[RMDB]
RNA sequence: GGGAACGACUCGAGUAGAGUCGAAAAGAUAUGGAGCACUCUCGGGAGCUGUUCGGAAACGAACAAGCAUCGAUCGAGCCCGUGCUCCUAAGUCAAACCAUUAUGUCUGUUCGCAGACAUAAUGGAAGAACUCAUCAGGGUUCGCCCUGAUGAGUUCAAAAGAAACAACAACAACAAC
Reactivity to 2A3 in 0.01 (KOAc 150mM, MgCl2 10mM, bicine 150mM(pH8.5), 24C), signal-to-noise 2, nucleotides 027 to 126: g010a010u020a020u150g010g000a000g000c000a000c000u290c000u010c010g050g020g000a040g000c020u000g020u000u030c010g020g020a080a070a020c000g000a010a000c050a250a090g010c000a290u260c050g130a160u090c010g010a010g050c090c150c040g000u010g000c000u000c000c010u000a070a000g030u000c020a020a030a050c010c010a000u000u000a000u020g010u000c010u010g090u020u060c300g000c190a000g010a000c010a000u020a000a010u010g000g000a000a040
Reactivity to DMS in 0.01 (KOAc 150mM, MgCl2 10mM, bicine 150mM(pH8.5), 24C), signal-to-noise 2, nucleotides 027 to 126: g010a100u000a300u000g000g000a030g000c000a000c010u000c000u000c010g000g000g000a020g000c000u000g000u000u020c000g010g000a100a040a130c020g010a030a000c000a020a040g010c000a200u010c090g010a070u010c000g010a020g000c240c140c300g000u000g010c000u000c000c010u000a010a020g000u000c020a180a140a200c000c000a000u010u000a000u000g000u000c000u000g010u000u020c140g020c000a010g000a000c000a000u000a000a010u000g000g000a040a080

Background:
An RNA of 177 nucleotides, treated with 2A3 and DMS and read out base by base. The 2A3 profile rests on 2,843 reads. DMS adducts were read by reverse transcription with MarathonRT. The data come from the RNA Mapping Database (RMDB), library TTRDEL. Conditions: 150 mM KOAc, 10 mM MgCl2 and 150 mM bicine (pH 8.5), 24 C.